Annotation
The record gives the reactivity of an RNA of 207 nucleotides to 2A3.

[RMDB]
RNA sequence: GGGAACGACUCGAGUAGAGUCGAAAACGUACGUGGAGACACGUACGACGAGACUUCGGUCUCGAAUCGCGCGAACUGGUGCUGCGCGCGCGCGAGGCGUCGGUGGUCGGCGAGCCCACGGACGCAAAAAGUCGCGCGGAAAUAAAUAGCAUUAGAACGAGUACCUGGUAUUCGUACCAGGUACUCGAAAAGAAACAACAACAACAAC
Reactivity to 2A3 in 0.01 (KOAc 150mM, MgCl2 10mM, bicine 150mM(pH8.5), 24C), signal-to-noise 1, nucleotides 027 to 156: c020g000u000a000c000g000u000g010g000a000g020a030c000a000c000g000u000a000c000g010a000c000g000a000g010a010c000u050u080c240g120g000u000c000u000c000g020a010a100u100c020g000c000g000c020g070a140a050c030u030g010g010u000g040c000u000g010c020g010c000g000c010g000c000g000c000g000a030g010g000c010g000u010c110g150g000u010g000g020u000c030g000g120c150g110a000g010c010c000c000a020c010g050g000a000c000g010c000a000a040a000a090a090g120u000c000g000c000g000c020g050g000a070a130a020u250a000a010a030u120a010g030c000a020u030u030a010g050a180a030
For 2A3, 918 sequencing reads were counted. Conditions: 150 mM KOAc, 10 mM MgCl2 and 150 mM bicine (pH 8.5), 24 C.